The data come from the RNA Mapping Database (RMDB), library OK3TST. This 207-nucleotide RNA was probed chemically with 2A3. Values are in units of 0.01, from 0 to 300, in steps of 10.
RNA sequence: GGGAACGACUCGAGUAGAGUCGAAAAGAUGGGGCAGGUGGGAAUAUACCUCGCCUACCACUUGCUCCUGAUUGAGAGAUAGACGGCGAGGGUCCGAUCAUACGAUAUAUUCCUGCUCAGCGUAUGAUCGGUUAUGAUACUUAAGACGAGCAGGCUACGUGGGUGAGUAUUUCGAUACUCACCCACGAAAAGAAACAACAACAACAAC
Reactivity to 2A3 in 0.01 (KOAc 150mM, MgCl2 10mM, bicine 150mM(pH8.5), 24C), signal-to-noise 2, nucleotides 027 to 156: g040a060u100g000g000g030g000c010a000g020g000u030g000g080g030a190a000u180a000u030a230c000c000u010c000g020c000c000u000a070c000c000a000c000u000u000g000c000u040c010c000u040g060a170u080u110g170a090g000a000g000a050u070a070g100a060c080g020g000c000g000a010g000g000g010u000c000c010g010a000u020c000a000u000a000c010g060a010u080a010u000a020u300u000c000c000u010g000c000u010c000a000g010c000g000u000a000u000g000a000u000c000g000g000u000u000a010u010g010a000u030a160c070u150u140a020a060g050a120c040g000a000g000c000a000g000g000c000u000a040